Conditions: 150 mM KOAc, 10 mM MgCl2 and 150 mM bicine (pH 8.5), 24 C. The record gives the reactivity of an RNA of 177 nucleotides to DMS. For DMS, 519 sequencing reads were counted. Reactivities are given for positions 27 through 126. It was measured as part of the RMDB library OK2TST.
RNA sequence: GGGAACGACUCGAGUAGAGUCGAAAAUUACGCACGAUGGUACAAGCAUGUGUAUUUCUACAUAUGCACUUAUGCACGCUUACUUUUCACAAAGUGCAGCACUGCCGCAAUACGGAAUUGCAAACAGAUUAAAAUUAAAUUUCGAUUUAAUUUUAAUAAAAGAAACAACAACAACAAC
Reactivity to DMS in 0.01 (KOAc 150mM, MgCl2 10mM, bicine 150mM(pH8.5), 24C), signal-to-noise 1, nucleotides 027 to 126: u010u010a080c100g000c040a020c170g040a070u000g000g010u000a050c160a150a130g010c000a020u000g020u010g050u020a000u000u000u000c230u000a010c020a060u020a060u000g000c000a060c110u000u000a080u000g000c000a100c040g000c020u000u000a120c110u000u000u000u050c170a040c180a060a040a070g020u000g010c040a020g000c020a050c130u020g000c020c000g040c070a050a040u000a110c160g000g000a040a010u000u010g020c120a050a150a170c080a110g000